[RMDB]
RNA sequence: GGGAACGACUCGAGUAGAGUCGAAAAGAUAUGGAUCGAUGCAGGGAGCUGAAUUCGGAAACGAACAGCUUUGAUCUGUUUCGAUCCUAAGUCAAAACACGUUCGAACCUUCGGGUUCGAACGUGAACCAUGCUACAUUCUUCGGAAUGUAGCAUGGAAAAGAAACAACAACAACAAC
Reactivity to DMS in 0.01 (KOAc 150mM, MgCl2 10mM, bicine 150mM(pH8.5), 24C), signal-to-noise 2, nucleotides 027 to 126: g010a020u000a180u020g000g000a020u000c000g010a010u000g010c020a010g000g020g010a030g010c000u000g000a100a220u000u000c020g000g000a040a050a120c000g000a010a080c000a010g010c000u000u000u010g020a050u010c000u000g010u000u000u000c000g020a020u000c000c000u000a010a050g000u000c020a110a090a110a220c000a000c000g010u000u000c000g010a010a010c010c000u000u000c240g040g010g010u000u000c010g000a000a000c010g020u000g010a010a120
Reactivity to 2A3 in 0.01 (KOAc 150mM, MgCl2 10mM, bicine 150mM(pH8.5), 24C), signal-to-noise 3, nucleotides 027 to 126: g020a010u050a010u080g000g000a000u000c010g000a000u030g030c010a000g250g300g060a010g000c000u030g050a270a280u040u000c010g000g050a040a040a020c020g000a000a010c010a010g040c000u060u080u170g170a120u120c000u000g010u000u000u000c000g000a000u000c000c000u010a010a000g000u000c010a060a020a000a130c000a000c010g020u000u000c000g000a000a000c000c020u060u120c300g090g000g000u000u000c000g010a010a000c000g000u000g000a000a000